[RMDB]
RNA sequence: GGGAACGACUCGAGUAGAGUCGAAAAGUUCGCGCGAUGGUGCUGGCCAUGCGAAAGGCCGGCGUGCCAGCUGACGUCUCGGACGCGGCGGGCACGUUCGUGUGCAAUCACCUCAUGUACGGCGUGCGUGUGGGCUAAAGUUCGCUUUAGCCCACACAAAAGAAACAACAACAACAAC
Reactivity to 2A3 in 0.01 (KOAc 150mM, MgCl2 10mM, bicine 150mM(pH8.5), 24C), signal-to-noise 4, nucleotides 027 to 126: g030u060u080c000g010c010g000c040g040a040u150g040g070u120g020c040u040g050g020c050c000a040u150g050c070g070a090a030a040g040g010c000c000g010g000c000g000u000g000c020c000a020g010c010u020g080a300c000g000u040c090u150c180g170g010a020c020g000c000g020g010c000g000g020g000c000a000c010g010u090u150c020g000u050g020u030g030c010a000a040u040c010a030c010c030u070c050a050u110g060u130a020c040g080g000c030g000u050g030c040
Reactivity to DMS in 0.01 (KOAc 150mM, MgCl2 10mM, bicine 150mM(pH8.5), 24C), signal-to-noise 1, nucleotides 027 to 126: g040u010u000c020g000c030g000c100g010a060u010g000g000u000g010c060u010g010g020c180c020a060u000g000c240g000a050a090a170g000g000c000c000g010g010c010g040u020g030c000c020a040g000c000u000g010a150c020g000u000c020u030c160g000g000a030c000g000c110g000g020c000g030g000g000c020a000c000g000u020u010c030g010u070g050u000g000c030a060a130u000c010a030c020c040u010c010a100u020g010u020a080c130g000g030c010g000u010g020c120
The record gives the reactivity of an RNA of 177 nucleotides to 2A3 and DMS. 2A3 adducts were read by reverse transcription with SuperScript II with manganese. The data come from the RNA Mapping Database (RMDB), library OK1LIB. The RNA was probed in 150 mM KOAc, 10 mM MgCl2 and 150 mM bicine (pH 8.5) at 24 C.